[RMDB]
RNA sequence: GGGAACGACUCGAGUAGAGUCGAAAACUGGCUUUGCGAAACGGAUUGUUCCGCAUUGGGAAGACGUAAGUGGUGUAGAUAGUUUACGUUCUUACGUAUACUGGAUAAUUCGACAGUGCCAAUACCGAUAUCACAGCGGAUUCGUCCGCUGUGAUAUAAAAGAAACAACAACAACAAC
Reactivity to 2A3 in 0.01 (KOAc 150mM, MgCl2 10mM, bicine 150mM(pH8.5), 24C), signal-to-noise 3, nucleotides 027 to 126: c040u010g000g050c020u080u080u090g080c130g140a060a080a030c020g080g000a080u030u080g020u140u000c010c030g010c070a090u060u140g140g030g100a060a030g030a020c010g000u010a000a000g040u050g180g150u110g060u060a040g070a300u170a140g130u040u130u000a010c000g030u080u020c010u010u030a000c010g060u060a020u010a050c010u000g040g010a020u030a080a040u030u060c020g050a050c030a000g030u010g040c000c010a010a010u050a070c020c030g000
Reactivity to DMS in 0.01 (KOAc 150mM, MgCl2 10mM, bicine 150mM(pH8.5), 24C), signal-to-noise 3, nucleotides 027 to 126: c240u000g020g000c000u000u000u000g030c080g020a050a080a160c040g000g010a070u000u000g020u000u000c000c060g020c060a070u010u020g010g020g010a100a050g000a040c020g000u000a020a030g010u010g000g020u010g020u010a060g020a140u010a120g020u010u000u000a010c020g010u000u000c050u000u000a060c010g000u000a030u010a060c020u000g010g010a040u000a020a080u000u020c020g010a110c030a030g010u000g000c020c010a020a120u000a180c030c020g000
Structure probing data (2A3 and DMS) for a 177-nucleotide construct.
DMS (dimethyl sulfate) methylates the pairing face of unpaired adenines and cytosines.
DMS adducts were read by reverse transcription with MarathonRT.
Conditions: 150 mM KOAc, 10 mM MgCl2 and 150 mM bicine (pH 8.5), 24 C.
For 2A3, 2,844 sequencing reads were counted.
It was measured as part of the RMDB library OK2TST.